[RMDB]
RNA sequence: GGGAACGACUCGAGUAGAGUCGAAAACUCAAGGAACGAUAAGUGAGGGUAGUACUGCUAACACCAUUUGUGAUUUAUCACACUCCGCACCGCUGCUUCCUUGUGGAGUUGGUCGGUGCAAUUUCUGCUUCAUAAGAGACUUCGGUCUCUUAUGAAGAAAAGAAACAACAACAACAAC
Reactivity to 2A3 in 0.01 (KOAc 150mM, MgCl2 10mM, bicine 150mM(pH8.5), 24C), signal-to-noise 4, nucleotides 027 to 126: c000u010c030a020a050g060g010a080a020c030g020a050u030a170a030g040u020g090a050g020g060g020u030a060g030u030a100c070u070g040c030u050a070a000c030a040c060c020a050u030u110u120g050u020g030a060u020u070u160a110u090c010a000c010a000c050u060c040c060g000c000a000c000c010g020c000u000g010c010u010u030c010c000u090u130g170u300g030g000a020g000u190u280g060g050u170c060g000g000u000g000c010a000a010u010u010u030c020u030g060
Reactivity to DMS in 0.01 (KOAc 150mM, MgCl2 10mM, bicine 150mM(pH8.5), 24C), signal-to-noise 3, nucleotides 027 to 126: c020u000c040a140a090g000g010a060a040c080g000a100u010a050a080g010u010g000a060g010g000g010u000a060g030u000a060c080u000g000c120u010a060a050c080a090c060c030a090u010u000u020g010u000g010a060u000u010u010a040u010c010a020c020a130c170u010c070c060g020c000a010c010c020g020c020u000g000c020u010u000c000c010u010u010g030u000g010g010a020g010u000u010g030g000u000c040g020g000u000g010c000a020a020u010u000u000c020u000g010
An RNA of 177 nucleotides, treated with 2A3 and DMS and read out base by base. The RNA was probed in 150 mM KOAc, 10 mM MgCl2 and 150 mM bicine (pH 8.5) at 24 C. DMS adducts were read by reverse transcription with MarathonRT. It was measured as part of the RMDB library RFMREP.